RNA sequence: GGGAACGACUCGAGUAGAGUCGAAAAGAUAUGGAGCAGCUACCCACCUUGAGGCUCGUCGUCGGAGGGAUUCGGAAACGAAUCCUCCCCACCCGACUACGAGCCUCAAGAGGCUGCUCCUAAGUCAUCCCAUAUAAAACUUCGGUUUUAUAUGGGAAAAAGAAACAACAACAACAAC
Reactivity to DMS in 0.01 (KOAc 150mM, MgCl2 10mM, bicine 150mM(pH8.5), 24C), signal-to-noise 2, nucleotides 027 to 126: g020a100u010a240u010g000g010a010g000c010a020g030c000u010a130c010c010c030a300c100c000u000u000g030a020g010g010c000u000c000g000u000c080g030u000c000g000g020a180g050g010g010a000u000u000c020g000g010a090a110a300c030g000a000a010u010c000c010u010c050c000c000c020a300c040c000c000g010a000c000u020a030c010g020a010g000c020c000u000c000a000a010g010a070g010g010c010u000g010c020u000c000c000u000a000a080g010u010c180a140